[RMDB]
RNA sequence: GGGAACGACUCGAGUAGAGUCGAAAAGAUAUGGACAGUGCUUUUGACGGACCCUUAUCGGAAACGAUAAGUGAGUCCGAUAAGCACGUCCUAAGUCAAAACUGCGCCUGGUUCGCCAGGCGCAGAACCAUAUGAUUUAGUUCGCUAAAUCAUAUGGAAAAGAAACAACAACAACAAC
Reactivity to 2A3 in 0.01 (KOAc 150mM, MgCl2 10mM, bicine 150mM(pH8.5), 24C), signal-to-noise 3, nucleotides 027 to 126: g010a010u040a020u090g000g010a020c150a200g040u000g000c020u090u090u160u230g300a200c140g000g000a010c000c000c000u000u000a000u000c000g020g000a030a030a020c010g000a000u010a020a020g040u050g130a080g000u000c000c000g000a000u000a000a000g000c000a000c000g000u000c000c000u000a090a020g030u000c020a000a020a150a210c010u010g000c000g000c010c000u050g020g010u080u060c130g040c120c010a000g000g020c000g000c010a000g000a000a010
Reactivity to DMS in 0.01 (KOAc 150mM, MgCl2 10mM, bicine 150mM(pH8.5), 24C), signal-to-noise 3, nucleotides 027 to 126: g010a020u000a270u000g000g000a010c000a140g050u000g000c000u000u000u010u000g010a160c100g010g000a020c010c010c000u000u000a000u000c000g010g000a060a070a160c010g010a010u000a010a010g010u020g010a150g020u000c010c000g000a020u000a000a010g000c000a010c020g000u000c000c000u000a020a090g010u000c030a060a070a080a180c010u000g010c000g020c000c000u000g000g010u000u010c210g010c000c010a020g020g000c000g000c000a000g000a010a110
Conditions: 150 mM KOAc, 10 mM MgCl2 and 150 mM bicine (pH 8.5), 24 C.
The record gives the reactivity of an RNA of 177 nucleotides to 2A3 and DMS.
It was measured as part of the RMDB library TTRDEL.
2A3 adducts were read by reverse transcription with SuperScript II with manganese.
2A3 is a SHAPE reagent: it acylates the 2'-hydroxyl of flexible nucleotides of all four kinds.
The DMS profile rests on 6,494 reads.